Record summary:
The record gives the reactivity of an RNA of 177 nucleotides to DMS and 2A3. Source: RMDB library OK2TST, as collected in RNAgym. The DMS profile rests on 19,113 reads. DMS adducts were read by reverse transcription with MarathonRT. For 2A3, 11,421 sequencing reads were counted. Reactivities are given for positions 27 through 126.
RNA sequence: GGGAACGACUCGAGUAGAGUCGAAAACAAACGCUUCUUCGGGUGGGUUGACCAAACCUGACCAAAUCCGGUACUUGGUAAGCCAGGGCUGUAUCAAGCCAUUGUGCGAUUUGUUAUCGGUUGCCGAUCCCUUGUUAAAUUUCGAUUUAACAAGGGAAAAAGAAACAACAACAACAAC
Reactivity to DMS in 0.01 (KOAc 150mM, MgCl2 10mM, bicine 150mM(pH8.5), 24C), signal-to-noise 9, nucleotides 027 to 126: c070a070a090a120c130g010c050u010u000c070u000u000c090g010g010g030u000g010g010g010u000u000g000a170c200c110a040a060a040c020c010u000g010a060c060c070a040a100a130u000c040c020g010g010u000a050c100u000u010g010g010u000a110a120g000c020c020a070g010g010g010c010u000g010u000a090u010c190a080a060g010c020c010a080u010u000g010u000g020c010g000a140u000u000u010g000u010u000a060u000c030g010g020u000u000g020c050c030g000a170
Reactivity to 2A3 in 0.01 (KOAc 150mM, MgCl2 10mM, bicine 150mM(pH8.5), 24C), signal-to-noise 6, nucleotides 027 to 126: c010a000a060a010c050g020c060u060u040c010u060u060c050g060g000g020u070g000g020g040u030u080g060a060c010c000a050a020a020c010c000u040g070a050c010c040a040a040a090u050c020c020g010g010u020a050c010u040u080g030g010u080a080a010g000c010c020a070g010g080g000c010u040g050u150a190u210c080a050a010g020c000c020a080u050u120g060u090g040c020g130a180u050u030u070g060u040u030a030u060c020g040g000u030u060g050c010c000g040a090